[RMDB]
RNA sequence: GGGAACGACUCGAGUAGAGUCGAAAACUGCGGUGGUUUGAUCUCGACCAGCCCUUUGCCUAGGGUGCGGAUGAUGCGCCAGCCACCCAGGUAGGUACCGGCGGCCAUGGCCACGGCGCAACUCACGUCCAAAUUGGGUUUUCGAACCCAAUUUGGAAAAAGAAACAACAACAACAAC
Reactivity to 2A3 in 0.01 (KOAc 150mM, MgCl2 10mM, bicine 150mM(pH8.5), 24C), signal-to-noise 2, nucleotides 027 to 126: c030u030g020c010g080g010u040g000g070u060u100u170g130a120u040c030u040c070g100a120c010c010a000g060c000c000c000u140u080u290g120c000c070u050a040g000g000g000u070g060c160g030g030a040u070g040a060u150g030c060g000c000c020a000g000c010c010a010c010c000c010a010g000g040u120a080g080g000u070a060c020c040g070g010c060g020g020c010c050a140u170g030g040c020c000a030c050g060g000c020g000c030a000a030c060u110c020a070c060g110
Reactivity to DMS in 0.01 (KOAc 150mM, MgCl2 10mM, bicine 150mM(pH8.5), 24C), signal-to-noise 2, nucleotides 027 to 126: c050u000g010c130g000g010u000g000g020u000u010u000g060a100u000c090u010c050g000a110c030c040a300g000c070c020c020u010u000u000g020c130c100u000a070g020g000g020u000g040c080g000g010a090u000g000a080u000g020c040g000c060c020a080g000c040c030a030c000c000c010a050g010g010u000a010g020g040u000a060c040c020g050g010c060g030g000c020c040a090u000g010g000c020c030a050c080g060g000c010g000c060a030a100c020u010c090a140c170g000
This 177-nucleotide RNA was probed chemically with 2A3 and DMS. The data come from the RNA Mapping Database (RMDB), library OK2TST. Conditions: 150 mM KOAc, 10 mM MgCl2 and 150 mM bicine (pH 8.5), 24 C. The 2A3 profile rests on 1,320 reads.